[RMDB]
RNA sequence: GGGAACGACUCGAGUAGAGUCGAAAAGCAGGACUCAUGCGAUACGACUCCAGCAUAGAAGGCUUAGGCGAUCCAAGCAUGGAUAAAACACUUAUGAACGAUACCUGUUAUUGUAUUUAUUGCAAACAUCCAUGUAGAUUUUCGAAUCUACAUGGAUAAAAGAAACAACAACAACAAC
Reactivity to DMS in 0.01 (KOAc 150mM, MgCl2 10mM, bicine 150mM(pH8.5), 24C), signal-to-noise 9, nucleotides 027 to 126: g010c040a030g010g010a180c080u010c050a060u000g010c030g010a130u000a100c130g000a070c040u000c030c060a060g010c030a060u000a110g010a110a110g010g000c030u010u010a090g020g010c060g010a090u000c020c090a060a120g020c070a060u000g000g010a070u000a050a060a050a070c090a060c080u010u000a080u010g000a080a070c110g010a100u010a070c030c030u010g010u000u000a090u010u000g010u000a040u000u000u000a050u030u000g000c060a070a080a110c200
Reactivity to 2A3 in 0.01 (KOAc 150mM, MgCl2 10mM, bicine 150mM(pH8.5), 24C), signal-to-noise 9, nucleotides 027 to 126: g020c010a010g010g040a060c020u030c090a030u040g000c010g030a030u030a130c050g040a040c020u000c030c030a010g000c010a030u070a150g160a160a030g140g000c010u080u080a060g030g000c020g050a040u010c020c010a020a000g030c010a080u050g000g040a040u090a100a090a020a010c110a020c040u170u100a080u220g060a070a010c040g030a030u070a110c010c010u020g050u110u050a120u090u060g040u020a100u020u220u030a180u140u110g010c020a010a040a060c040